This 207-nucleotide RNA was probed chemically with DMS and 2A3. It was measured as part of the RMDB library ARCHII. For 2A3, 3,160 sequencing reads were counted. The reactions ran in a buffer of 150 mM KOAc, 10 mM MgCl2 and 150 mM bicine (pH 8.5), at 24 C.
[RMDB]
RNA sequence: GGGAACGACUCGAGUAGAGUCGAAAAGAACAACAUCGUUCCUUUCGCUCGUAAGGCUGCUCCUGUAGCUGCUUAAACGCCACAAACUUUCUGGCUCGAGCGUCUAGUCGUAGACUCCGUUAAUACGCCUAGACUUAAACCCCCAACGGAUGCUCGACUACUACAAAUGGUUCGCCAUUUGUAGUAGAAAAGAAACAACAACAACAAC
Reactivity to DMS in 0.01 (KOAc 150mM, MgCl2 10mM, bicine 150mM(pH8.5), 24C), signal-to-noise 1, nucleotides 027 to 156: g020a040a040c020a170a300c110a230u020c070g010u000u000c010c070u030u010u000c010g030c000u000c020g020u010a120a200g020g010c030u000g020c010u000c070c060u000g010u010a020g070c030u010g050c050u000u000a120a110a100c060g040c050c040a070c080a050a080a110c080u000u000u000c010u020g010g050c030u010c000g050a050g020c040g000u000c000u000a020g000u000c000g000u000a030g000a140c060u000c040c080g040u000u010a110a250u010a040c000g030c080c040u010a040g010a060c020u010u000a040a050a220c020c000c040c040c210a070a040c030g000g000a100u020g020c010u010c000g040a300
Reactivity to 2A3 in 0.01 (KOAc 150mM, MgCl2 10mM, bicine 150mM(pH8.5), 24C), signal-to-noise 5, nucleotides 027 to 156: g020a040a030c060a010a040c030a200u180c110g020u010u010c020c000u040u110u070c030g000c010u010c020g020u060a030a080g040g010c010u030g000c010u050c050c100u130g120u230a000g000c030u060g020c020u080u090a100a130a060c090g030c010c030a070c090a060a220a140c160u170u270u070c070u070g020g000c000u000c010g020a020g000c000g000u000c000u000a000g000u000c000g000u000a020g000a020c000u000c000c000g010u000u030a040a010u000a020c000g010c000c000u000a000g010a010c000u020u130a110a110a110c010c020c000c030c030a000a000c000g000g010a020u060g000c020u020c020g040a030